Chemical mapping of a 207-nucleotide RNA with 2A3.

RNA sequence: GGGAACGACUCGAGUAGAGUCGAAAAAAACUUUUGUGAUUUGCUGAAACGGGACUAAUCUCCUCACCGAGGCUAAGCAAGUAAAAUACGCCUCUCAUAUCCUUACCUGAGGGUGGUAAGGAAAUAACCUGCAACGCUUCCUUCGGGAAGCGUUGAACGUAUUGAUGAACUUCGGUUCAUCAAUACGAAAAGAAACAACAACAACAAC
Reactivity to 2A3 in 0.01 (KOAc 150mM, MgCl2 10mM, bicine 150mM(pH8.5), 24C), signal-to-noise 2, nucleotides 027 to 156: a010a000a010c140u240u160u090u110g110u070g030a160u010u050u100g000c040u040g030a070a060a020c040g010g010g010a020c030u080a070a080u030c030u020c040c010u050c030a060c030c080g030a020g020g000c020u030a010a040g050c020a040a030g090u150a040a060a070a080u100a040c110g010c000c010u000c000u000c010a070u040a040u190c010c010u000u020a000c000c010u020g070a080g010g080g000u060g000g010u010a000a010g000g000a000a000a030u010a000a020c020c030u030g020c000a000a000c000g000c000u000u000c000c020u010u040c160g070g000g000a000a000g020c000g000u000u000g000a000a000
For 2A3, 1,473 sequencing reads were counted.
The RNA was probed in 150 mM KOAc, 10 mM MgCl2 and 150 mM bicine (pH 8.5) at 24 C.
Source: RMDB library M2RFPK, as collected in RNAgym.